The record gives the reactivity of an RNA of 207 nucleotides to 2A3 and DMS. Values cover nucleotides 27 to 156. Conditions: 150 mM KOAc, 10 mM MgCl2 and 150 mM bicine (pH 8.5), 24 C. DMS adducts were read by reverse transcription with MarathonRT. High 2A3 reactivity points to a flexible backbone, as in loops and unpaired stretches.

RNA sequence: GGGAACGACUCGAGUAGAGUCGAAAACAUUAUUGGUUUUGAACAACAACGUUUCCUUGUUCAAUUUCAACAAUUUGUCGGAAACAGAACGAAAAACGAUACCAUCCACUUUGUUGUCGGGAUUAACGACAAAAUCUACAAUCACUCCUAUGUCACCCCAAACUACAUGGUUCGCCAUGUAGUUUGGAAAAGAAACAACAACAACAAC
Reactivity to 2A3 in 0.01 (KOAc 150mM, MgCl2 10mM, bicine 150mM(pH8.5), 24C), signal-to-noise 4, nucleotides 027 to 156: c040a060u070u110a070u060u150g040g010u030u040u020u010g020a020a000c000a000a010c010a020a070c050g010u030u050u050c020c000u000u000g010u000u010c010a020a050u030u060u070c050a080a070c020a070a130u040u040u150g060u030c050g040g020a040a070a080c050a060g090a090a040c050g070a080a050a020a010a000c030g030a040u040a100c030c040a050u030c050c020a110c160u100u100u120g050u050u010g010u040c020g020g000g060a100u100u140a080a030c040g010a000c000a000a040a000a060u060c050u070a060c050a040a020u060c030a060c100u040c000c020u090a060u160g080u050c030a050c000c010
Reactivity to DMS in 0.01 (KOAc 150mM, MgCl2 10mM, bicine 150mM(pH8.5), 24C), signal-to-noise 2, nucleotides 027 to 156: c060a090u020u010a070u000u000g010g020u040u000u000u000g000a030a050c000a050a040c030a080a300c140g020u020u000u000c030c000u010u010g050u000u000c000a010a000u000u000u000c020a020a070c010a040a060u020u000u000g030u000c010g070g000a130a060a130c030a180g000a030a230c060g020a080a070a060a070a100c050g000a100u000a090c010c040a180u000c010c020a040c100u000u000u000g040u000u010g010u000c000g040g000g050a220u000u010a040a140c040g010a080c010a030a020a010a080u010c060u010a070c070a070a090u000c070a060c030u000c040c010u000a100u000g000u020c020a190c080c070